RNA sequence: GGGAACGACUCGAGUAGAGUCGAAAACAGUCGCUCACAGGCGCGCAGGAACAGCUUCGGAUCCGGCUUGAUCACACCUUCGACGUAGGACAUCAGCACCUCGUCGAAGAGGUCGCCGAUGCCGACGCGGUCCAGGGCGGGACGGAUGUCGAAGGCGUCUUACCUGCGGAUUCGUCCGCAGGUAAGAAAAAGAAACAACAACAACAAC
Reactivity to 2A3 in 0.01 (KOAc 150mM, MgCl2 10mM, bicine 150mM(pH8.5), 24C), signal-to-noise 1, nucleotides 027 to 156: c040a020g170u140c030g050c040u030c060a140c030a170g000g000c000g000c000g020c050a000g050g110a070a120c060a030g060c010u060u060c010g020g010a020u020c060c040g030g010c030u020u130g020a030u080c040a040c000a030c110c050u030u030c020g050a080c010g050u180a090g000g030a060c000a090u190c060a030g090c120a010c000c000u010c000g080u020c040g040a040a040g000a000g000g000u050c040g000c000c000g000a030u090g090c000c000g010a030c030g010c000g050g000u000c000c000a030g070g040g000c000g010g010g050a000c030g010g010a040u060g070u130c010g020a020a020g050g040c050g040